[RMDB]
RNA sequence: GGGAACGACUCGAGUAGAGUCGAAAACGGGUCUUACCGCUUACUGCAUGAUUUGCGCGCUGUUAACGCCAAGCUUGUUCCUUUUGGGGCCGUCCAACAGGGGGCGCCAGUUCUCUCCGCGCUCCCGUUCAAAUAGGAGGUUCGCCUCCUAUUUGAAAAAAGAAACAACAACAACAAC
Reactivity to 2A3 in 0.01 (KOAc 150mM, MgCl2 10mM, bicine 150mM(pH8.5), 24C), signal-to-noise 9, nucleotides 027 to 126: c020g010g010g020u030c020u040u090a110c020c010g030c050u040u130a070c030u050g060c030a060u070g060a210u110u050u130g050c050g010c000g010c030u050g050u210u110a100a010c040g010c020c010a050a020g020c020u050u060g040u090u100c020c000u060u080u080u120g020g000g020g020c020c010g040u030c020c010a060a060c040a120g000g000g020g000g000c000g000c000c000a030g010u090u010c040u010c010u020c040c020g000c000g000c000u000c000c000c000g000
Reactivity to DMS in 0.01 (KOAc 150mM, MgCl2 10mM, bicine 150mM(pH8.5), 24C), signal-to-noise 8, nucleotides 027 to 126: c070g000g000g000u010c030u010u010a110c050c030g010c060u000u010a100c060u010g000c030a050u010g000a120u010u010u020g020c070g010c060g020c020u000g000u010u010a070a150c100g000c020c040a050a080g000c060u000u010g010u000u000c020c010u000u000u010u010g010g010g000g020c020c040g000u010c040c050a080a080c180a130g010g000g000g010g010c020g010c010c100a120g000u000u000c040u010c030u000c190c200g010c010g010c010u000c000c000c000g010
Conditions: 150 mM KOAc, 10 mM MgCl2 and 150 mM bicine (pH 8.5), 24 C. An RNA of 177 nucleotides, treated with 2A3 and DMS and read out base by base. For DMS the reverse transcriptase was MarathonRT. For 2A3 the reverse transcriptase was SuperScript II with manganese. Reactivities are rounded to 0.1 and cut off at 0 and 3.